[RMDB]
This 177-nucleotide RNA was probed chemically with 2A3 and DMS.
Source: RMDB library M2PK50, as collected in RNAgym.
Conditions: 150 mM KOAc, 10 mM MgCl2 and 150 mM bicine (pH 8.5), 24 C.
Reactivities are given for positions 27 through 126.
For DMS, 1,047 sequencing reads were counted.

RNA sequence: GGGAACGACUCGAGUAGAGUCGAAAAUGAUAGGCUUUCGAGCCUAUCAACUGCGUAGCUGCGUUAAAAUAUUAGCUACGCUUAAUAAAAAUUUUUAACGCAAAUAUAAGGUCUUCGGACCUUAUAAGAAAUGAAAGAUGUUCGCAUCUUUCAUUUCAAAAGAAACAACAACAACAAC
Reactivity to 2A3 in 0.01 (KOAc 150mM, MgCl2 10mM, bicine 150mM(pH8.5), 24C), signal-to-noise 2, nucleotides 027 to 126: u040g000a000u000a000g010g000c010u020u070u140c250g060a000g000c000c000u010a000u000c010a000a000c000u030g000c000g000u000a000g000c060u060g000c020g000u010u010a030a060a040a090u260a110u170u190a000g010c000u000a000c000g000c010u000u020a120a030u080a000a030a020a020a040u130u070u040u050u090a000a000c010g000c000a040a110a000u050a000u000a050a000g000g010u000c000u030u080c150g060g010a010c000c000u000u010a000u000a000a000
Reactivity to DMS in 0.01 (KOAc 150mM, MgCl2 10mM, bicine 150mM(pH8.5), 24C), signal-to-noise 1, nucleotides 027 to 126: u000g000a000u000a010g000g020c000u010u000u000c160g000a020g000c000c000u010a000u000c000a020a120c060u000g010c010g030u010a010g000c010u000g000c000g020u000u000a010a050a050a210u000a070u000u000a030g010c010u000a010c000g020c000u010u010a030a050u010a050a030a040a050a030u000u000u000u000u000a010a020c000g030c010a190a090a180u000a010u000a010a010g000g000u000c000u020u020c190g000g000a020c000c000u000u000a000u000a010a130